[RMDB]
RNA sequence: GGGAACGACUCGAGUAGAGUCGAAAAGAUAUGGAGAGCAAGAAUUGUAAUAUCGUUUCAACAGCCUGUCAUUCGGAAACGAAUGCAGGACAUGAAACCGAUAUUACAAUUCUUGCUCUCCUAAGUCGCUAUUUUCUUACUUCGGUAAGAAAAUAGCAAAAGAAACAACAACAACAAC
Reactivity to DMS in 0.01 (KOAc 150mM, MgCl2 10mM, bicine 150mM(pH8.5), 24C), signal-to-noise 1, nucleotides 027 to 126: g010a120u000a300u020g000g010a010g050a010g010c010a000a010g010a020a020u000u000g010u000a010a010u000a000u000c010g000u000u010u000c000a050a100c280a220g000c000c000u000g010u010c000a010u000u000c000g020g000a180a120a250c020g000a030a000u000g000c010a000g000g000a010c080a160u000g020a010a000a010c130c070g000a000u000a000u010u000a000c000a000a020u000u010c000u010u000g000c000u000c000u010c000c000u000a000a080g020u000c120